[RMDB]
RNA sequence: GGGAACGACUCGAGUAGAGUCGAAAAGAGCGAUUAGACAAAGGGGUAGAGCUACAUAUUAGAUAGCUGUAUAAACGUUCAAGUUACAUCAAAACAUCUUCAAUAUUUAUUACUUACUUUCCUUUCUGCCAGAGUACGGUAUUCGUACCGUACUCAACGUUACUAAAAUAUUCGUAUUUUAGUAACGAAAAGAAACAACAACAACAAC
Reactivity to 2A3 in 0.01 (KOAc 150mM, MgCl2 10mM, bicine 150mM(pH8.5), 24C), signal-to-noise 9, nucleotides 027 to 156: g050a000g010c030g050a080u070u150a060g030a080c060a040a060a020g020g010g010g020u040a020g020a000g080c010u030a020c020a060u220a110u160u100a070g130a210u040a020g010c010u000g050u050a070u060a050a100a000c030g010u040u050c060a030a020g030u050u090a060c030a070u140c040a070a100a040a060c020a070u050c040u130u060c040a070a080u040a140u150u130u070a120u120u070a040c020u060u020a030c010u050u100u110c020c000u020u070u060c050u070g060c020c040a050g000a000g000u000a000c000g000g000u000a010u010u040c060g030u020a000c000c000g000u000a000c000u000c000a000a000
Reactivity to DMS in 0.01 (KOAc 150mM, MgCl2 10mM, bicine 150mM(pH8.5), 24C), signal-to-noise 3, nucleotides 027 to 156: g010a080g040c050g000a130u000u000a090g030a080c070a040a030a040g000g000g000g030u000a090g000a080g010c020u000a040c010a120u000a190u000u010a110g010a130u000a020g020c010u000g020u000a090u000a030a050a070c050g020u000u000c030a060a080g000u000u000a060c040a100u000c080a050a080a100a130c030a060u000c020u000u010c030a060a060u010a080u000u020u000a030u010u000a070c040u010u000a080c050u000u000u000c030c020u000u000u000c050u000g010c050c070a160g000a040g020u000a000c000g000g010u000a030u000u000c300g020u000a010c020c000g030u000a000c020u000c010a010a030

An RNA of 207 nucleotides, treated with 2A3 and DMS and read out base by base. The RNA was probed in 150 mM KOAc, 10 mM MgCl2 and 150 mM bicine (pH 8.5) at 24 C. DMS adducts were read by reverse transcription with MarathonRT. For 2A3, 9,818 sequencing reads were counted.